[RMDB]
RNA sequence: GGGAACGACUCGAGUAGAGUCGAAAAAUCGGUGGGCGCGGACAAGGCUGGGGGCAACGCCAGCGUCUCGCUGAAGUGGCCGCAAGAAGCCCAGCCUGAGAGCCUCACCCUCGACCUCGCCGCCACGAAGAUCUAGAACAUUCGUGUUCUAGAUCUUAAAAGAAACAACAACAACAAC
Reactivity to DMS in 0.01 (KOAc 150mM, MgCl2 10mM, bicine 150mM(pH8.5), 24C), signal-to-noise 9, nucleotides 027 to 126: a090u000c070g010g020u000g010g010g020c080g030c100g010g000a100c090a160a020g010g010c000u000g000g010g020g000g010c020a050a020c020g000c250c000a010g000c010g020u010c130u010c070g030c010u010g010a070a130g010u000g000g020c000c020g000c240a090a100g000a150a180g010c010c000c000a010g010c000c010u000g000a100g000a130g010c020c010u010c030a030c030c010c030u000c020g000a060c050c020u000c070g010c020c030g010c050c050a100c180g000
Reactivity to 2A3 in 0.01 (KOAc 150mM, MgCl2 10mM, bicine 150mM(pH8.5), 24C), signal-to-noise 4, nucleotides 027 to 126: a000u110c050g000g010u070g050g040g000c100g000c030g040g040a040c040a060a010g010g000c000u010g030g020g020g010g000c040a050a010c030g020c050c010a010g010c020g070u090c090u090c080g000c000u000g000a070a010g030u030g040g020c030c000g020c110a090a050g100a100a040g090c020c000c000a000g000c000c020u050g030a140g010a020g040c010c010u020c020a050c000c020c000u030c030g060a090c000c010u010c010g040c010c000g050c020c000a050c050g060